[RMDB]
RNA sequence: GGGAACGACUCGAGUAGAGUCGAAAAUUCUAGUACAUGCUAUGAUAAAAAUAAUAACAUACCCUUAAUAGGCUUUGACAUGGGAGGAACAUCUACUGAUGUCAGUAGGUACGGCGAUGGGAGGUUAAUUAGGAGGGGAUUUCGAUCCCCUCCUAAUAAAAGAAACAACAACAACAAC
Reactivity to DMS in 0.01 (KOAc 150mM, MgCl2 10mM, bicine 150mM(pH8.5), 24C), signal-to-noise 1, nucleotides 027 to 126: u010u010c000u010a070g030u020a090c110a060u000g020c030u010a070u000g010a080u020a020a040a100a070a090u020a100a080u000a060a160c030a110u000a100c040c010c000u000u010a060a070u010a070g020g010c030u000u040u000g010a070c120a020u000g020g000g010a040g020g000a050a080c070a020u000c010u010a020c010u000g010a200u000g030u000c010a020g010u000a070g000g020u000a070c080g010g010c020g000a080u020g020g000g000a050g010g000u000u000a030
Chemical mapping of a 177-nucleotide RNA with DMS.
The DMS profile rests on 832 reads.
Conditions: 150 mM KOAc, 10 mM MgCl2 and 150 mM bicine (pH 8.5), 24 C.